[RMDB]
RNA sequence: GGGAACGACUCGAGUAGAGUCGAAAAGAUAUGGAGGCAUACAAUUUUUGGAAGGUAGGGAGUCGUCUCUCGGAAACGAGAGAACGACUUUGAUCUAUGCUUCCAAAAAUUGUAUGCCUCCUAAGUCGAAGGAUAAUUUCUUCGGAAAUUAUCCUUCAAAAGAAACAACAACAACAAC
Reactivity to DMS in 0.01 (KOAc 150mM, MgCl2 10mM, bicine 150mM(pH8.5), 24C), signal-to-noise 1, nucleotides 027 to 126: g000a080u010a300u000g000g010a000g020g020c010a010u010a010c000a020a000u000u010u000u000u000g000g030a030a000g010g010u000a020g010g020g020a010g020u000c000g000u000c000u000c000u010c000g030g000a150a080a260c000g010a020g010a020g020a050a020c010g010a000c000u000u000u000g000a050u020c000u000a010u000g000c000u000u000c000c010a000a000a000a000a000u000u000g010u010a000u000g010c000c010u000c000c000u010a000a060g000u010c110